[RMDB]
RNA sequence: GGGAACGACUCGAGUAGAGUCGAAAAGGUCGUGGCCCGAGAUCCGCCUCGCUGGUCACGAUGCGGCGCUUGCGGUGCACGGUCACCGCGCGGUCCUCGGGGUGGCGGCAGUCGAGGCACAGAUAGCCGCCUAGUCAUGCUUCGGCAUGACUAGGCGAAAAGAAACAACAACAACAAC
Reactivity to 2A3 in 0.01 (KOAc 150mM, MgCl2 10mM, bicine 150mM(pH8.5), 24C), signal-to-noise 2, nucleotides 027 to 126: g050g010u000c000g000u000g120g250c000c000c000g020a000g010a060u080c030c000g030c060c010u020c020g000c030u070g070g000u000c000a010c020g000a010u070g050c020g000g040c040g000c090u120u200g000c000g000g040u030g000c100a090c300g280g040u220c050a020c000c000g000c020g000c010g080g030u090c000c000u000c000g050g000g010g040u060g020g020c000g060g060c010a010g030u110c010g030a030g000g050c040a000c000a060g110a010u180a060g100c030
Reactivity to DMS in 0.01 (KOAc 150mM, MgCl2 10mM, bicine 150mM(pH8.5), 24C), signal-to-noise 1, nucleotides 027 to 126: g000g010u000c020g030u010g000g030c010c020c040g010a060g000a120u000c120c140g020c080c030u000c000g060c080u020g010g000u000c030a170c010g010a050u000g000c060g020g020c070g000c010u010u030g030c000g010g020u010g030c010a270c210g020g000u010c010a020c000c010g020c000g000c050g010g010u010c030c020u010c040g000g000g030g000u000g000g010c020g020g010c060a210g030u000c030g010a050g010g000c050a110c120a090g010a050u000a100g000c060